[RMDB]
RNA sequence: GGGAACGACUCGAGUAGAGUCGAAAACAGGAGGUUAGCAUAGCUCCAUUCUACUAUGCAGCUAGUCGUCGUUUUCGACGUCUAGGAUAGACCACUACAGCAGGGUCGAUGAACUGCUGAUUACCGCCUCUCGUAGCGCGGGUUCUGGCUACGUACAAGGCAUAUAGGAUUUCGAUCCUAUAUGCCUAAAAGAAACAACAACAACAAC
Reactivity to 2A3 in 0.01 (KOAc 150mM, MgCl2 10mM, bicine 150mM(pH8.5), 24C), signal-to-noise 3, nucleotides 027 to 156: c030a030g000g000a010g010g020u070u160a050g030c010a000u000a000g010c020u040c090c000a070u170u020c060u050a060c010u000a000u010g020c000a010g040c010u020a000g010u020c020g000u000c020g010u060u020u150u300c030g000a010c000g000u000c000u000a010g040g000a000u100a010g020a040c000c010a020c090u130a050c010a010g030c000a010g030g000g040u030c030g090a090u210g020a030a080c000u000g030c010u000g030a110u090u160a100c030c010g030c010c050u150c030u060c050g030u030a000g000c020g000c050g070g020g000u080u070c010u020g030g010c000u000a010c010g030u010a070c060a100
Reactivity to DMS in 0.01 (KOAc 150mM, MgCl2 10mM, bicine 150mM(pH8.5), 24C), signal-to-noise 2, nucleotides 027 to 156: c040a140g020g020a060g020g020u010u000a120g040c000a020u000a030g000c000u010c080c300a250u000u010c050u000a000c020u010a000u000g010c040a300g020c020u010a000g000u000c010g000u000c010g070u010u010u010u030c000g000a020c030g020u010c020u000a030g010g010a130u000a050g000a100c020c020a080c000u000a150c030a030g040c020a010g000g010g040u020c040g000a120u010g020a030a090c030u000g000c000u000g000a130u000u000a050c030c000g010c010c000u000c050u000c040g030u010a060g010c060g020c030g000g000g030u000u010c090u020g020g010c020u010a050c040g040u000a080c050a200
Notes: This 207-nucleotide RNA was probed chemically with 2A3 and DMS. 2A3 adducts were read by reverse transcription with SuperScript II with manganese. The 2A3 profile rests on 1,645 reads. DMS adducts were read by reverse transcription with MarathonRT. Conditions: 150 mM KOAc, 10 mM MgCl2 and 150 mM bicine (pH 8.5), 24 C.